[RMDB]
RNA sequence: GGGAACGACUCGAGUAGAGUCGAAAAGUGUCGGACUCGCAAGUGCGAAUAUAUUAUAUCCCUAAACAGGGAGUGGAAAGCACGUCCUGGAGUGGAAAACACGUCCAUCCCAAAGCGAGAAAUGAAACAUUAGAUUAAACUUCGGUUUAAUCUAAUGAAAAGAAACAACAACAACAAC
Reactivity to DMS in 0.01 (KOAc 150mM, MgCl2 10mM, bicine 150mM(pH8.5), 24C), signal-to-noise 8, nucleotides 027 to 126: g020u000g030u010c030g020g010a200c010u000c010g010c020a160a130g010u000g010c010g000a090a080u000a090u010a090u010u000a110u010a090u000c000c000c000u010a070a080a130c240a060g000g000g000a030g010u000g000g000a110a110a180g010c010a010c010g010u000c090c070u010g010g000a110g020u000g000g000a060a060a130a100c120a050c130g000u000c010c020a050u000c000c010c010a050a070a100g010c020g000a030g000a100a080a110u000g000a080a110a150
Reactivity to 2A3 in 0.01 (KOAc 150mM, MgCl2 10mM, bicine 150mM(pH8.5), 24C), signal-to-noise 5, nucleotides 027 to 126: g070u080g090u070c030g040g060a060c010u000c010g000c040a090a070g000u010g010c000g060a140a010u080a000u000a010u150u110a090u070a070u130c010c000c000u130a230a270a040c060a070g000g000g020a020g000u030g010g070a090a080a020g030c000a000c020g060u110c010c030u020g000g030a020g000u060g010g040a100a120a030a030c070a000c010g130u000c010c000a030u030c000c000c000a030a000a000g030c030g010a020g030a080a100a030u130g020a080a070a010
Chemical mapping of a 177-nucleotide RNA with DMS and 2A3. The reactions ran in a buffer of 150 mM KOAc, 10 mM MgCl2 and 150 mM bicine (pH 8.5), at 24 C. For 2A3 the reverse transcriptase was SuperScript II with manganese. The data come from the RNA Mapping Database (RMDB), library M2PK90. For DMS, 9,852 sequencing reads were counted. DMS (dimethyl sulfate) methylates the pairing face of unpaired adenines and cytosines.